[RMDB]
RNA sequence: GGGAACGACUCGAGUAGAGUCGAAAAACAAGGAGGUGGAGCGACGGAUCUACACGCGCCGCGUGCGCUACCUCACGCCGAUCUCGCUCGAACGCCUGGCCGCGUUCGGCCUGCACGUAUCCAUCCGCCUAGCACAUUCCUUCGGGAAUGUGCUAGGAAAAGAAACAACAACAACAAC
Reactivity to DMS in 0.01 (KOAc 150mM, MgCl2 10mM, bicine 150mM(pH8.5), 24C), signal-to-noise 1, nucleotides 027 to 126: a020c120a130a120g010g030a060g060g020u000g000g000a170g030c040g010a150c040g000g010a120u000c070u000a060c180a060c110g010c030g010c070c090g010c130g040u000g010c050g000c010u000a050c020c040u000c030a080c190g000c110c040g000a030u000c010u000c030g010c000u010c040g000a010a020c010g010c020c040u010g000g000c090c300g010c120g010u000u020c040g010g000c010c020u000g000c130a140c050g040u000a050u010c030c060a050u000c040c060g000
Reactivity to 2A3 in 0.01 (KOAc 150mM, MgCl2 10mM, bicine 150mM(pH8.5), 24C), signal-to-noise 2, nucleotides 027 to 126: a000c140a060a060g070g000a090g000g020u040g030g000a040g030c030g070a080c060g010g000a020u100c060u220a070c200a010c140g070c020g000c010c010g090c070g100u180g020c060g000c000u020a040c030c000u000c030a010c010g060c010c030g040a080u050c040u040c070g010c030u070c100g000a040a000c020g000c010c040u050g080g000c020c020g060c050g100u140u090c050g020g010c000c000u110g000c120a060c010g040u020a210u080c010c000a040u000c040c020g030

This 177-nucleotide RNA was probed chemically with DMS and 2A3. DMS adducts were read by reverse transcription with MarathonRT. The reactions ran in a buffer of 150 mM KOAc, 10 mM MgCl2 and 150 mM bicine (pH 8.5), at 24 C. High DMS reactivity at an A or C suggests that its Watson-Crick edge is free.